An RNA of 207 nucleotides, treated with DMS and 2A3 and read out base by base.
RNA sequence: GGGAACGACUCGAGUAGAGUCGAAAAUUGUUUCCAAUGAACAAAGAGUAUGAGCAUGUGAAGGACAUCCUGGCCACAUAUAUGUCCAAAGAGGGUCAAAACGUGCAGGGUCGAAGGAAGACAGUCCAAACCAGGGUGGUGGUUUUCCACAGAGAAGCCCCAUUAAGCAAUUCGUUGCUUAAUGGGGAAAAGAAACAACAACAACAAC
Reactivity to DMS in 0.01 (KOAc 150mM, MgCl2 10mM, bicine 150mM(pH8.5), 24C), signal-to-noise 1, nucleotides 027 to 156: u000u000g000u000u010u010c020c050a170a090u030g020a080a050c060a060a050a130g000a200g020u000a110u000g000a170g060c040a070u030g000u000g050a120a170g040g020a050c030a100u000c060c060u010g040g000c030c080a090c070a080u020a130u010a110u000g010u000c050c000a060a140a080g020a060g010g010g010u000c070a030a070a100a150c050g040u000g060c050a150g010g000g070u010c000g000a050a070g050g000a080a120g000a090c020a020g010u000c010c010a040a030a050c040c020a060g000g000g000u000g050g010u000g020g000u030u010u000u000c020c000a180c070a080g000a130g000a050a170g000
Reactivity to 2A3 in 0.01 (KOAc 150mM, MgCl2 10mM, bicine 150mM(pH8.5), 24C), signal-to-noise 1, nucleotides 027 to 156: u020u010g010u000u000u000c000c010a010a080u110g070a030a020c070a050a080a010g040a020g060u120a030u120g010a030g020c020a030u050g030u060g080a120a010g000g000a010c010a030u030c010c000u000g050g000c050c000a000c020a000u120a000u010a020u090g020u040c030c000a040a000a060g020a060g060g020g000u010c030a020a080a000a000c050g020u020g020c000a020g000g020g020u070c040g050a040a020g060g020a020a020g030a020c000a000g130u040c000c000a000a050a060c020c000a020g010g020g000u010g000g040u010g000g020u000u000u070u090c070c010a000c040a020g070a080g040a030a030g100
For 2A3 the reverse transcriptase was SuperScript II with manganese.